[RMDB]
RNA sequence: GGGAACGACUCGAGUAGAGUCGAAAAAGAUCUGAGAAAACAUAUAUUCAGCUAGAAUAUGAAAGCCAGGCAGUAUCGUUGACAUGUGAUCAUUAUGUAUGUAAAGCACAAGAUUAAAAGAAACCAGAUGUUACUUCAAGGUUUGAAGUUUUAUGUAACGAAAAUAUGGAUUCGUCCAUAUUUUCGUAAAAGAAACAACAACAACAAC
Reactivity to 2A3 in 0.01 (KOAc 150mM, MgCl2 10mM, bicine 150mM(pH8.5), 24C), signal-to-noise 2, nucleotides 027 to 156: a000g030a060u050c040u060g020a020g050a110a100a010a000c040a000u120a010u010a020u130u060c020a020g020c070u110a040g020a080a050u050a030u090g080a080a020a020g000c050c010a000g010g000c010a010g020u070a020u070c030g020u020u100g040a050c050a080u090g090u030g020a020u030c010a070u080u140a060u070g070u020a020u060g020u040a040a120a080g000c000a010c030a070a080g020a050u060u200a030a050a080a070g110a030a040a000c020c000a020g010a060u060g040u090u040a040c020u040u090c060a090a000g030g050u060u050u050g060a060a020g010u000u000u070u000a070u050g040u010a020
Reactivity to DMS in 0.01 (KOAc 150mM, MgCl2 10mM, bicine 150mM(pH8.5), 24C), signal-to-noise 2, nucleotides 027 to 156: a120g020a080u000c010u000g050a210g010a140a080a070a070c020a060u010a100u000a070u000u020c020a150g010c090u000a180g010a080a090u010a030u000g020a130a060a050g000c040c020a100g020g020c020a090g000u000a080u000c060g030u010u000g020a050c050a090u020g000u010g020a070u010c030a060u010u000a040u010g020u020a030u020g000u000a060a060a100g040c030a060c020a040a060g020a140u010u010a060a030a080a100g000a090a080a110c060c000a060g010a100u000g010u000u000a040c030u000u010c070a050a070g000g010u000u000u000g020a040a190g010u000u010u000u000a040u000g000u010a110
Structure probing data (2A3 and DMS) for a 207-nucleotide construct. Reactivities are given for positions 27 through 156. For DMS, 3,785 sequencing reads were counted.